An RNA of 177 nucleotides, treated with 2A3 and DMS and read out base by base. High DMS reactivity at an A or C suggests that its Watson-Crick edge is free. The reactions ran in a buffer of 150 mM KOAc, 10 mM MgCl2 and 150 mM bicine (pH 8.5), at 24 C. For 2A3 the reverse transcriptase was SuperScript II with manganese. For DMS, 992 sequencing reads were counted.

RNA sequence: GGGAACGACUCGAGUAGAGUCGAAAAAUGGCAAGGCAGAUGACCGCUUCAUAUCCUAUCAAAGCAGCAUCGUCGAAUUGGCGUUCCUGAUUUCCACCAAUUCGGAAUUGAUGAAUGAGGUAGAUAAGCUGACAGAAGUGUUCGCACUUCUGUCAGCAAAAGAAACAACAACAACAAC
Reactivity to 2A3 in 0.01 (KOAc 150mM, MgCl2 10mM, bicine 150mM(pH8.5), 24C), signal-to-noise 1, nucleotides 027 to 126: a000u120g010g050c040a060a040g020g000c020a030g010a150u090g040a070c000c020g000c000u000u000c000a040u030a030u140c020c060u040a030u110c060a120a120a020g040c030a010g030c010a000u010c000g020u020c000g000a000a010u020u010g020g000c030g060u080u050c030c000u180g100a300u100u050u010c070c020a050c000c000a000a010u020u020c010g000g110a080a070u150u180g040a020u030g020a010a080u060g050a030g000g010u060a010g080a130u090a180a000
Reactivity to DMS in 0.01 (KOAc 150mM, MgCl2 10mM, bicine 150mM(pH8.5), 24C), signal-to-noise 1, nucleotides 027 to 126: a060u040g000g030c080a040a070g000g020c030a050g000a060u010g000a070c070c060g000c040u000u000c060a050u000a170u000c070c020u000a070u000c050a060a060a070g010c060a050g010c070a020u000c020g000u000c020g010a070a000u000u040g000g010c050g000u000u000c080c070u010g030a170u000u000u000c160c060a140c020c010a010a020u020u000c000g000g000a050a040u010u010g010a030u000g000a060a010u000g030a080g000g000u000a020g000a120u000a120a070